About this RNA:
An RNA of 177 nucleotides, treated with DMS and 2A3 and read out base by base. The 2A3 profile rests on 6,108 reads. It was measured as part of the RMDB library TTRDES. For DMS the reverse transcriptase was MarathonRT. Conditions: 150 mM KOAc, 10 mM MgCl2 and 150 mM bicine (pH 8.5), 24 C.
[RMDB]
RNA sequence: GGGAACGACUCGAGUAGAGUCGAAAAGAUAUGGAAAGUAACGAAUCAUUGAACUACUUCACUAGUCGGAAACGACUAGGGAAGCAAUGACUAUUACUUUCCUAAGUCAAAGGGGCCUUCGGGCCCCCAAACGUUAAUCCUUCGGGAUUAACGUUUGAAAAGAAACAACAACAACAAC
Reactivity to DMS in 0.01 (KOAc 150mM, MgCl2 10mM, bicine 150mM(pH8.5), 24C), signal-to-noise 5, nucleotides 027 to 126: g000a050u010a300u010g000g010a000a010a010g000u000a000a020c140g010a080a120u000c010a040u000u000g010a090a060c070u010a300c010u010u010c000a020c000u000a000g010u000c000g020g000a080a100a200c000g000a010c000u000a010g000g000g010a010a000g000c000a010a010u000g010a020c080u000a300u000u000a000c010u000u000u000c000c000u010a040a090g010u010c040a090a130a210g000g000g010g010c000c000u000u010c220g050g030g010c000c000c010c000
Reactivity to 2A3 in 0.01 (KOAc 150mM, MgCl2 10mM, bicine 150mM(pH8.5), 24C), signal-to-noise 3, nucleotides 027 to 126: g030a010u070a040u120g000g000a030a000a000g010u000a030a050c110g080a200a300u020c020a010u010u020g020a080a070c070u210a070c000u300u000c000a000c040u000a000g000u000c000g020g030a080a080a100c000g000a000c000u000a000g010g000g000a010a000g040c010a010a030u030g000a000c040u030a020u040u010a000c010u000u000u000c000c000u010a170a030g030u010c010a060a120a120g010g010g010g010c020c000u050u070c300g140g100g010c020c060c000c000